This 177-nucleotide RNA was probed chemically with DMS and 2A3. Conditions: 150 mM KOAc, 10 mM MgCl2 and 150 mM bicine (pH 8.5), 24 C. DMS adducts were read by reverse transcription with MarathonRT.
RNA sequence: GGGAACGACUCGAGUAGAGUCGAAAAUGAUGUGUAUGACGCUCUGCCGAUUUCUGUAGAGAUUAGCACCGUCGUAACAUGCAGCGACAGCCAGUGCACAGUGAGGGUGCCACCUGGUACCACAGUGGGAGAUCUAGUGUUUCGACACUAGAUCUCCAAAAGAAACAACAACAACAAC
Reactivity to DMS in 0.01 (KOAc 150mM, MgCl2 10mM, bicine 150mM(pH8.5), 24C), signal-to-noise 1, nucleotides 027 to 126: u000g010a070u000g020u000g020u000a050u000g000a050c010g000c020u000c050u010g010c000c010g020a010u010u000u000c020u020g030u000a180g020a020g000a000u000u000a000g010c000a000c140c010g000u000c010g010u000a040a020c050a040u000g000c000a080g000c090g000a060c110a130g010c020c020a040g010u010g020c000a020c050a070g030u010g000a140g000g000g040u010g000c000c020a150c120c020u010g010g010u010a020c050c040a050c110a050g000u030g010
Reactivity to 2A3 in 0.01 (KOAc 150mM, MgCl2 10mM, bicine 150mM(pH8.5), 24C), signal-to-noise 2, nucleotides 027 to 126: u130g010a010u050g070u060g070u090a040u050g010a000c000g010c000u010c010u010g010c010c020g060a050u050u060u000c070u130g300u170a100g010a000g000a050u010u030a010g010c010a070c290c000g000u000c000g000u010a020a000c000a000u080g050c040a020g020c060g060a070c040a000g020c040c010a010g000u030g070c000a000c000a100g050u020g170a150g020g120g020u020g010c000c000a070c050c040u060g000g000u040a060c000c030a110c010a090g090u090g100

Description:
The data come from the RNA Mapping Database (RMDB), library OK2TRN.